RNA sequence: GGGAACGACUCGAGUAGAGUCGAAAAUAACAAAAUCGUUAGUUUCUCCCGUCAAACAGCACUAGUUGCCGCUUGAUCCUUAAGGAGAUGGGGUGAUAUCAGCCUUAUCAACCAAAUGAUACGCGGAUACAAUCCGAGAGUUCGCUCUCGGAUUGUAAAAAGAAACAACAACAACAAC
Reactivity to DMS in 0.01 (KOAc 150mM, MgCl2 10mM, bicine 150mM(pH8.5), 24C), signal-to-noise 3, nucleotides 027 to 126: u000a030a020c040a040a160a110a150u090c120g010u000u000a020g000u000u000u000c060u000c000c010c050g020u030c160a070a080a070c200a150g010c080a060c130u000a000g010u010u000g020c000c020g000c010u000u000g000a080u010c050c120u000u010a060a110g020g020a270g020a040u000g010g000g000g000u010g000a100u010a170u020c150a300g010c040c000u000u000a020u000c000a030a070c020c020a060a050a060u010g000a060u010a060c150g000c000g000g000a210
Reactivity to 2A3 in 0.01 (KOAc 150mM, MgCl2 10mM, bicine 150mM(pH8.5), 24C), signal-to-noise 4, nucleotides 027 to 126: u060a010a030c110a000a110a010a270u230c120g010u050u050a050g010u080u120u040c030u000c000c010c010g070u090c080a080a070a170c030a040g090c020a040c150u140a030g050u090u100g030c000c010g010c000u040u250g040a010u000c010c000u090u060a100a080g000g000a030g020a000u000g010g000g050g010u020g030a010u050a080u300c080a030g030c000c000u030u010a010u000c000a010a140c010c050a050a000a000u080g000a000u010a040c010g000c010g000g000a040
Record summary:
Structure probing data (DMS and 2A3) for a 177-nucleotide construct. The RNA was probed in 150 mM KOAc, 10 mM MgCl2 and 150 mM bicine (pH 8.5) at 24 C. DMS adducts were read by reverse transcription with MarathonRT. The data come from the RNA Mapping Database (RMDB), libraries RFM100 and RFMREP. Reactivities are given for positions 27 through 126.